[RMDB]
RNA sequence: GGGAACGACUCGAGUAGAGUCGAAAACACCGGGCCGACGAUUCCGAGGAUAUAGCCGUCCAGGAACAUGCCGCCGGUAAGAACGAUGAUCAUCCUCAGCAUAAAGCGUCGUUUGAACGCCGCUGACGUUUCUUCCUCGACGGUUUGGAUCGAAAUCCCUUACUCUGUAGUUCGCUACAGAGUAAGGAAAAGAAACAACAACAACAAC
Reactivity to DMS in 0.01 (KOAc 150mM, MgCl2 10mM, bicine 150mM(pH8.5), 24C), signal-to-noise 2, nucleotides 027 to 156: c020a180c050c000g000g000g000c050c010g050a110c040g010a110u010u010c040c030g020a130g020g020a170u000a130u010a120g010c040c040g070u000c000c040a100g030g000a020a060c080a040u010g010c020c000g010c080c000g000g010u010a050a210g000a040a060c000g010a070u020g000a140u010c090a100u010c090c060u000c090a120g040c080a220u010a080a060a100g010c020g050u010c020g000u000u000u010g010a100a120c060g000c010c010g030c030u000g020a030c020g000u000u000u010c020u000u010c020c020u010c030g020a040c040g030g030u010u000u000g030g000a120u000c030g010a080a070a130u010c040
Reactivity to 2A3 in 0.01 (KOAc 150mM, MgCl2 10mM, bicine 150mM(pH8.5), 24C), signal-to-noise 7, nucleotides 027 to 156: c070a020c020c000g010g050g050c060c030g050a090c020g040a110u080u050c020c010g050a130g060g050a070u130a060u100a190g070c030c040g010u000c000c010a020g010g010a010a020c020a040u100g010c020c020g030c030c000g010g010u020a030a020g040a040a010c020g020a030u080g020a060u150c040a080u070c060c070u100c050a050g040c060a120u160a200a180a010g030c010g010u010c010g020u000u090u130g060a110a010c070g020c030c020g010c040u050g030a060c020g000u000u060u050c020u020u000c000c010u040c010g010a020c020g010g010u030u060u090g050g010a050u040c030g020a030a050a040u080c000